[RMDB]
Chemical mapping of a 177-nucleotide RNA with DMS. The RNA was probed in 150 mM KOAc, 10 mM MgCl2 and 150 mM bicine (pH 8.5) at 24 C. The DMS profile rests on 836 reads.
RNA sequence: GGGAACGACUCGAGUAGAGUCGAAAAUCUGACAAGUGACUGUGGAGUUACCUCUGAACUUCCCCUUCCUUCUCUGUCAGGAGCAACUUACAAUGAUGUCACAGGUGGUUUUAAGGUCAUGUGAAAAUACCUAUACCGGCUUCGGCCGGUAUAGGUAAAAAGAAACAACAACAACAAC
Reactivity to DMS in 0.01 (KOAc 150mM, MgCl2 10mM, bicine 150mM(pH8.5), 24C), signal-to-noise 1, nucleotides 027 to 126: u000c000u000g020a060c100a090a090g030u010g010a020c030u000g020u000g030g000a020g020u000u000a040c090c090u000c040u000g000a090a080c180u020u000c020c000c010c070u000u020c050c070u010u000c020u000c050u010g010u000c070a020g000g000a030g010c100a070a060c050u000u040a030c130a070a130u020g020a090u010g000u000c050a020c070a070g020g030u010g020g010u000u000u000u000a120a090g000g000u000c060a030u010g020u000g010a070a050a070a120